[RMDB]
RNA sequence: GGGAACGACUCGAGUAGAGUCGAAAAGAUAUGGACGAGCUUUUGACGCGGACUACUCGGAAACGAGUAGGUCGCGAUAAGCUCAGUCCUAAGUCAAAAGACUACGAUGCUUCGGCAUCGUAGUCAACCUAUGAGCACAGUUCGCUGUGCUCAUAGGAAAAGAAACAACAACAACAAC
Reactivity to 2A3 in 0.01 (KOAc 150mM, MgCl2 10mM, bicine 150mM(pH8.5), 24C), signal-to-noise 2, nucleotides 027 to 126: g020a020u060a060u110g000g000a020c000g000a000g010c030u090u060u130u300g260a160c160g010c010g000g000a020c000u000a000c000u000c010g040g000a060a050a010c010g000a000g010u010a000g000g000u000c010g000c020g010a010u010a000a000g000c000u000c000a020g000u000c010c000u010a080a010g060u010c020a110a000a060a120g000a010c000u010a000c000g000a000u000g000c010u060u130c280g140g000c010a010u020c000g000u010a000g000u000c000a000a000
Reactivity to DMS in 0.01 (KOAc 150mM, MgCl2 10mM, bicine 150mM(pH8.5), 24C), signal-to-noise 3, nucleotides 027 to 126: g000a020u000a290u010g000g010a030c010g000a020g000c010u000u010u010u010g010a150c100g030c010g010g000a030c000u000a000c000u010c010g010g000a050a090a130c010g010a010g010u000a000g000g000u010c000g010c000g000a030u000a020a020g010c000u000c000a040g020u000c010c000u010a010a090g000u010c020a080a080a140a130g010a020c000u000a000c000g010a020u000g000c000u000u010c200g020g010c000a010u000c000g010u000a000g010u000c000a010a060